[RMDB]
RNA sequence: GGGAACGACUCGAGUAGAGUCGAAAAGAUAUGGAGGCACAGGCUCCAACAGCUAUAGUCGGAAACGACUAUAGACAUGGAGCUGUAGCCUCCUAAGUCAAAAGGCCUUCGGUUCGCCGAAGGCCAAGAUCUUAUGGGGGUUCGCCCCCAUAAGAUCAAAAGAAACAACAACAACAAC
Reactivity to DMS in 0.01 (KOAc 150mM, MgCl2 10mM, bicine 150mM(pH8.5), 24C), signal-to-noise 2, nucleotides 027 to 126: g010a100u010a300u010g000g000a020g010g020c040a000c240a060g010g000c000u010c000c000a090a090c240a240g000c000u010a000u000a020g050u000c000g030g000a100a100a220c010g000a020c000u000a020u000a000g000a030c020a300u020g000g000a000g020c000u000g000u000a300g010c000c000u010c000c000u000a010a060g010u010c050a090a190a120a110g010g020c020c000u000u010c000g000g020u000u020c240g020c000c000g000a000a020g000g050c000c050a020a020